[RMDB]
RNA sequence: GGGAACGACUCGAGUAGAGUCGAAAACGACGGAGCUAGGUGCGUAUGAGGUGGCUUAUGCGAUUACGGUACACAAAAGUCAGGGAUCGGAGUAUGAGAACGUGGCGGUAUUGCUUCCUAGUAACGCGUUUGUGCGCGUAUUCGUACGCGCACAAACAAAAGAAACAACAACAACAAC
Reactivity to 2A3 in 0.01 (KOAc 150mM, MgCl2 10mM, bicine 150mM(pH8.5), 24C), signal-to-noise 1, nucleotides 027 to 126: c020g120a070c020g000g000a100g050c010u050a030g170g000u040g000c070g030u030a080u120g080a010g040g000u080g020g070c000u100u100a090u210g090c000g010a010u040u080a050c040g000g080u080a060c080a000c040a050a220a060a000g040u060c020a010g030g030g040a030u090c030g110g000a040g040u130a050u140g130a050g000a110a040c060g020u010g030g000c050g000g020u050a080u030u090g000c020u060u030c030c000u030a020g000u040a090a030c040g000c000
Reactivity to DMS in 0.01 (KOAc 150mM, MgCl2 10mM, bicine 150mM(pH8.5), 24C), signal-to-noise 1, nucleotides 027 to 126: c060g000a180c100g040g000a130g010c020u000a050g000g000u000g000c000g000u000a030u010g010a060g000g020u000g000g000c070u000u000a100u000g010c000g000a100u000u020a140c050g010g050u010a060c080a110c080a090a120a100a150g020u000c070a030g010g020g010a070u020c030g000g010a030g000u000a050u000g000a120g030a080a060c130g000u000g010g010c060g040g040u000a060u010u000g010c110u000u000c020c010u000a060g000u000a090a230c130g000c060